[RMDB]
The data come from the RNA Mapping Database (RMDB), library M2RFPK. An RNA of 207 nucleotides, treated with DMS and 2A3 and read out base by base. The DMS profile rests on 5,790 reads.
RNA sequence: GGGAACGACUCGAGUAGAGUCGAAAAGAUCUGCGCCGAUCCGAAACGCUAGCAAACAGCCCGCAUCAUGUCGGCUCCUAACUUCGACGUGGUGAAAUACUGAGCUUAUGCGAGUAAGCCUGUUAGCAAUAGAUCAGAACGUUCGCGUUCUGAUCAAACAUGUAAUCUUCUUCGGAAGAUUACAUGUAAAAGAAACAACAACAACAAC
Reactivity to DMS in 0.01 (KOAc 150mM, MgCl2 10mM, bicine 150mM(pH8.5), 24C), signal-to-noise 3, nucleotides 027 to 156: g010a080u000c010u000g010c120g000c030c020g000a090u000c000c030g020a140a120a070c060g010c040u000a040g020c030a040a100a150c130a180g010c000c010c050g000c030a050u000c040a060u010g010u000c030g030g000c100u000c080c040u010a080a040c070u020u010c000g020a030c020g030u000g030g000u010g000a080a100a130u000a100c070u000g010a110g030c010u000u030a130u000g010c150g000a140g000u000a030a060g010c010c020u000g000u000u000a080g010c060a090a160u020a100g000a010u000c000a000g010a020a010c010g030u000u000c300g050c050g030u000u010c000u000g010a010u010c010a040a060
Reactivity to 2A3 in 0.01 (KOAc 150mM, MgCl2 10mM, bicine 150mM(pH8.5), 24C), signal-to-noise 6, nucleotides 027 to 156: g030a050u030c030u090g020c040g040c060c050g040a060u040c020c040g060a080a060a040c070g010c050u050a020g020c020a030a040a150c040a060g040c000c000c000g000c000a010u010c000a000u010g010u010c000g030g030c030u110c030c050u160a160a190c030u090u070c020g000a010c010g010u010g010g010u020g030a030a030a020u170a050c060u050g040a030g010c000u030u020a020u100g070c040g020a040g070u010a000a020g010c000c020u050g020u050u070a010g010c020a090a140u040a190g000a000u000c000a000g000a000a010c020g020u060u060c200g020c000g120u000u000c030u000g000a000u000c000a000a000